This 207-nucleotide RNA was probed chemically with DMS and 2A3. It was measured as part of the RMDB library OK3TST. DMS adducts were read by reverse transcription with MarathonRT. The DMS profile rests on 4,418 reads. The RNA was probed in 150 mM KOAc, 10 mM MgCl2 and 150 mM bicine (pH 8.5) at 24 C. Values cover nucleotides 27 to 156. For 2A3 the reverse transcriptase was SuperScript II with manganese.

RNA sequence: GGGAACGACUCGAGUAGAGUCGAAAACAUCCAGUCUCAGCAAUAAGAGGAGCACAUCUCCAAAUUUAUAAUGAAAGACAAGCAAAGUGGGACUUCAUGGCCUUGGCUGGACACCAAGUGAUAGCUAAUUUUUGCAGCAGGGAAGACGAAAUAACAAACCUAUUAUCGAGUUCGCUCGAUAAUAGGUAAAAGAAACAACAACAACAAC
Reactivity to DMS in 0.01 (KOAc 150mM, MgCl2 10mM, bicine 150mM(pH8.5), 24C), signal-to-noise 3, nucleotides 027 to 156: c030a110u000c030c010a130g020u020c000u000c040a130g000c060a100a110u010a090a120g010a300g000g010a080g040c030a030c110a100u000c010u000c000c010a010a150a130u010u000u000a090u010a120a090u010g000a150a120a080g030a070c050a060a080g020c030a090a060a120g020u000g010g010g020a050c010u000u000c050a050u010g020g010c020c000u000u000g020g010c010u010g030g010a070c070a050c040c010a050a080g020u010g020a120u000a060g020c070u000a020a120u000u000u000u000u000g020c080a060g010c020a010g010g020g000a030a030g020a100c050g000a020a030a060u000a060a110c060a060a070
Reactivity to 2A3 in 0.01 (KOAc 150mM, MgCl2 10mM, bicine 150mM(pH8.5), 24C), signal-to-noise 6, nucleotides 027 to 156: c040a050u060c030c030a020g020u010c000u000c050a060g030c050a070a120u090a170a020g030a040g050g000a010g030c080a040c040a180u080c030u040c030c040a080a040a050u100u160u070a160u040a090a080u070g050a080a030a070g070a050c060a050a040g020c040a010a110a050g050u050g020g010g030a040c000u070u070c130a080u100g030g000c010c010u070u040g040g000c020u020g010g050a020c010a010c030c020a050a000g010u040g100a060u070a030g020c040u050a100a120u050u100u080u110u090g030c030a030g010c010a000g020g040g030a030a020g020a030c040g040a020a090a050u200a090a030c050a040a110